[RMDB]
RNA sequence: GGGAACGACUCGAGUAGAGUCGAAAAUACAUUUCACUCCAGACCCUCGCUAAGCUCCUGAGAAACGCCAGGUAAACGUUUGCCUACACACACCCUAAUCGCAACAUCAGGGUUGCGGCACGCCGGACGACAGUGCGGAAUUCGUUCCGCACUGUCGAAAAGAAACAACAACAACAAC
Reactivity to 2A3 in 0.01 (KOAc 150mM, MgCl2 10mM, bicine 150mM(pH8.5), 24C), signal-to-noise 3, nucleotides 027 to 126: u090a000c070a040u050u080u080c120a080c030u060c020c000a030g030a090c030c000c000u050c000g030c040u020a020a000g010c000u000c010c020u070g000a030g070a040a080a000c070g000c020c020a050g000g100u060a080a050a020c020g000u030u090u030g000c000c000u070a050c040a010c000a000c000a040c070c000c000u040a070a060u100c060g020c030a000a070c010a030u210c070a050g140g080g000u010u030g010c020g010g000c040a010c050g010c010c030g050g010a010
Reactivity to DMS in 0.01 (KOAc 150mM, MgCl2 10mM, bicine 150mM(pH8.5), 24C), signal-to-noise 2, nucleotides 027 to 126: u020a090c100a050u000u010u000c000a090c110u030c020c040a190g070a060c100c010c010u000c060g030c010u010a040a080g030c030u010c000c000u000g000a120g000a030a130a060c140g010c020c080a040g000g060u000a070a060a170c060g000u000u000u000g020c010c000u040a100c120a050c000a090c130a000c000c000c100u010a080a130u030c010g000c060a030a040c060a160u010c070a080g050g000g000u020u000g000c030g000g000c170a040c090g000c000c110g020g020a240